This 177-nucleotide RNA was probed chemically with DMS and 2A3. 2A3 adducts were read by reverse transcription with SuperScript II with manganese. Values cover nucleotides 27 to 126. Reactivities are rounded to 0.1 and cut off at 0 and 3. The RNA was probed in 150 mM KOAc, 10 mM MgCl2 and 150 mM bicine (pH 8.5) at 24 C.
[RMDB]
RNA sequence: GGGAACGACUCGAGUAGAGUCGAAAAUGUUUAGAGAUUAACUGUUCGUGCAUUUCAGUUAGUUCAUUUUAGUCGUACAUUCAGGAAAAGAGGAAGAAACGAAAAUGUGCAGAAUGCAAAAAGUCGGGGCGAUGGUAAUAUUCGUAUUACCAUCGCCAAAAGAAACAACAACAACAAC
Reactivity to DMS in 0.01 (KOAc 150mM, MgCl2 10mM, bicine 150mM(pH8.5), 24C), signal-to-noise 2, nucleotides 027 to 126: u050g000u000u040u030a050g010a140g000a030u020u000a010a060c090u070g050u000u010c090g060u010g000c010a070u000u000u000c050a040g000u010u000a020g000u000u000c000a100u000u060u000u020a100g020u010c050g070u030a050c200a110u050u000c120a020g000g000a090a060a110a170g020a040g030g050a040a170g000a100a050a040c100g000a030a030a080a000u000g000u010g000c120a050g000a180a010u030g000c070a040a040a010a130a200g000u000c020g030g000
Reactivity to 2A3 in 0.01 (KOAc 150mM, MgCl2 10mM, bicine 150mM(pH8.5), 24C), signal-to-noise 2, nucleotides 027 to 126: u230g080u050u120u190a180g000a030g030a020u050u000a010a010c000u010g020u090u060c140g140u030g010c050a060u000u010u080c060a050g010u000u000a000g020u010u060c080a120u120u010u060u120a110g010u030c010g010u000a050c010a070u020u050c030a030g110g240a170a130a020a000g100a140g050g010a000a080g000a060a100a000c010g060a070a000a000a000u020g020u000g000c020a040g130a140a000u000g000c050a000a020a130a000a000g170u100c090g000g050